[RMDB]
RNA sequence: GGGAACGACUCGAGUAGAGUCGAAAACUGCGCUCCAGCUCUUCACCGGCACGACGGCCCUUGGCCUCGACGUUGCCCAGGCGAUCCAGGCGGACCACGUUCGAGCCACGCAGGUCGCGGAUGUUCAUCAGCGGUGCGAACUUGGAGGUGUAGGCGAAAUACGUCCAACGUUCGCGUUGGACGUAUUAAAAGAAACAACAACAACAAC
Reactivity to 2A3 in 0.01 (KOAc 150mM, MgCl2 10mM, bicine 150mM(pH8.5), 24C), signal-to-noise 1, nucleotides 027 to 156: c010u000g030c030g020c030u060c080c000a020g000c040u050c000u190u200c040a000c000c010g120g150c130a040c130g300a060c000g030g060c000c000c000u010u060g000g030c040c040u010c000g000a000c000g040u020u020g000c000c000c000a100g090g090c010g110a050u030c150c070a030g250g000c000g050g030a010c020c020a000c030g070u140u150c000g020a040g000c000c010a050c030g090c090a060g000g000u000c000g000c020g060g050a050u110g090u260u150c070a090u000c000a080g170c030g120g000u000g020c010g020a060a070c040u120u270g000g030a080g150g020u060g000u000a040g010g110c130g060a000
The record gives the reactivity of an RNA of 207 nucleotides to 2A3. The 2A3 profile rests on 520 reads. For 2A3 the reverse transcriptase was SuperScript II with manganese.